RNA sequence: GGGAACGACUCGAGUAGAGUCGAAAAGAACUUGAGUCACAGAAUGAUGGAAAUCUGAUAAUUGUGCAUGUGUCACUCAGUAGUGUUGAUGUGGUACUCAAGGACUGCAAAGCAACAAUAAACCUGAGCACUUCUACGUUUUCGAACGUAGAAGUGCAAAAGAAACAACAACAACAAC
Reactivity to 2A3 in 0.01 (KOAc 150mM, MgCl2 10mM, bicine 150mM(pH8.5), 24C), signal-to-noise 3, nucleotides 027 to 126: g040a030a020c000u020u010g000a000g010u000c000a000c000a030g130a200a260u120g100a000u100g070g300a070a070a070u000c110u030g150a050u070a200a200u170u110g020u010g010c020a050u220g050u060g110u200c000a000c000u020c030a020g020u140a030g030u030g060u130u020g050a080u030g020u010g000g020u070a130c000u000c000a000a000g040g000a010c050u000g000c070a000a000a130g050c000a010a080c010a000a060u100a080a060a000c010c000u000g000a000
Reactivity to DMS in 0.01 (KOAc 150mM, MgCl2 10mM, bicine 150mM(pH8.5), 24C), signal-to-noise 1, nucleotides 027 to 126: g010a010a190c020u000u040g000a030g000u090c000a010c130a110g020a080a010u040g020a080u000g000g050a050a000a060u010c030u000g000a140u000a020a030u100u000g060u000g000c020a060u000g000u000g000u000c000a000c000u110c000a020g000u020a120g000u000g000u000u000g010a170u000g000u000g000g080u000a000c000u020c080a110a000g030g040a060c000u000g000c080a000a080a050g050c250a030a100c120a170a060u000a010a100a120c180c030u000g000a300

An RNA of 177 nucleotides, treated with 2A3 and DMS and read out base by base.